[RMDB]
RNA sequence: GGGAACGACUCGAGUAGAGUCGAAAAUGGUUUCGACGGGGGUUGUGAAGUCGCCUGGCGCAUGCCGAGGGGGUAGCUUUCCUCGUAAAUCCAGCUGCAAAACUCUAGUUGCCAACGACGACAACUACGCUCUGGCCGCUUAAGGCCUAAGCCUCGACUUCGAACAAUUGUUCGCAAUUGUUCGAAGAAAAGAAACAACAACAACAAC
Reactivity to 2A3 in 0.01 (KOAc 150mM, MgCl2 10mM, bicine 150mM(pH8.5), 24C), signal-to-noise 1, nucleotides 027 to 156: u100g000g010u020u010u050c030g010a030c040g060g000g000g040g000u050u030g040u080g080a070a050g000u040c080g040c080c080u030g000g000c010g000c110a060u120g050c050c020g000a010g000g030g020g010g000u020a000g010c020u020u080u080c000c000u020c020g050u090a030a030a000u040c020c030a000g000c010u010g030c050a040a120a110a270c110u030c050u070a050g080u090u080g030c040c030a140a000c130g060a000c040g040a000c120a000a000c030u110a090c050g030c020u050c030u020g000g000c000c000g020c100u250u160a130a040g000g000c000c000u000a000a000g010c000c020u060c020g020a060